[RMDB]
RNA sequence: GGGAACGACUCGAGUAGAGUCGAAAACUGACUCAUGGAUUCAUUAAUAUCUUUAUACGAGCUACUAAUGUACAAUUCUUUAUAACUGAACUGAGAUAUAUACAUUUGAUCUAUGGUUUCCAUGAUUGAGUAAAUGAAUGCUCUGCAAUAACUAAUGAUGAAACACAGAGUUCGCUCUGUGUUUCAUAAAAGAAACAACAACAACAAC
Reactivity to 2A3 in 0.01 (KOAc 150mM, MgCl2 10mM, bicine 150mM(pH8.5), 24C), signal-to-noise 2, nucleotides 027 to 156: c030u080g040a000c020u000c030a010u000g010g010a030u050u000c030a020u050u150a120a100u140a160u120c060u060u220u100a160u030a200c080g050a020g100c030u120a090c010u080a180a050u030g000u030a050c030a140a180u200u080c010u030u250u070a300u090a270a210c080u050g100a030a040c060u080g020a010g010a050u100a020u010a020u000a080c000a020u010u070u080g050a080u050c040u070a050u090g030g000u000u010u000c000c000a000u000g010a030u000u080g040a010g020u070a010a120a120u120g100a030a010u010g020c000u000c030u120g020c050a050a130u050a210a000c100u040a140a000u130g070
Reactivity to DMS in 0.01 (KOAc 150mM, MgCl2 10mM, bicine 150mM(pH8.5), 24C), signal-to-noise 1, nucleotides 027 to 156: c000u010g010a040c120u000c010a010u000g010g010a050u000u030c010a090u000u020a050a120u000a090u000c010u040u000u000a140u010a280c010g000a020g030c030u010a090c040u000a030a020u040g020u000a030c040a080a260u000u000c010u000u020u000a120u000a130a300c060u000g020a090a120c080u000g000a030g010a120u000a060u000a030u020a090c010a040u020u010u010g010a110u010c000u010a080u000g030g030u000u000u000c010c000a030u000g000a120u000u010g000a060g000u000a060a090a090u000g010a140a090u000g020c050u000c060u000g020c090a070a190u000a090a110c070u000a090a130u000g020